This 177-nucleotide RNA was probed chemically with 2A3 and DMS.
RNA sequence: GGGAACGACUCGAGUAGAGUCGAAAACUUCAUGCGCAUAUCGGAUGCACCCCUGAUAUCAGCGGCCACAUGCACAGUGAGUGAGUGCAUCUACUCAGCAGAUUACGGCGGUAUGGCCUCCAUACAAUGAUUCUUAUAAAUUCGUUUAUAAGAAUCAAAAAGAAACAACAACAACAAC
Reactivity to 2A3 in 0.01 (KOAc 150mM, MgCl2 10mM, bicine 150mM(pH8.5), 24C), signal-to-noise 7, nucleotides 027 to 126: c010u100u080c050a060u140g010c050g000c040a030u040a060u190c070g040g030a020u060g020c010a060c010c010c000c010u020g050a050u040a040u230c030a020g020c030g060g010c020c000a080c000a030u060g020c030a020c010a070g070u040g120a060g040u080g040a040g020u020g030c000a020u000c000u010a040c030u040c040a040g000c010a020g030a100u100u130a070c090g020g020c020g030g020u040a040u040g020g020c020c020u000c030c010a050u050a100c020a040a070
Reactivity to DMS in 0.01 (KOAc 150mM, MgCl2 10mM, bicine 150mM(pH8.5), 24C), signal-to-noise 9, nucleotides 027 to 126: c070u000u000c080a080u000g000c050g020c060a070u000a060u010c080g010g000a070u000g000c050a080c040c030c030c030u000g010a120u010a050u010c090a080g010c060g010g000c040c080a060c120a060u000g010c040a050c080a080g010u000g000a090g010u000g010a070g020u000g000c040a030u000c040u010a050c050u000c040a120g020c060a060g010a110u010u010a080c140g010g010c040g010g010u000a030u000g010g010c030c020u000c050c030a050u000a040c150a080a150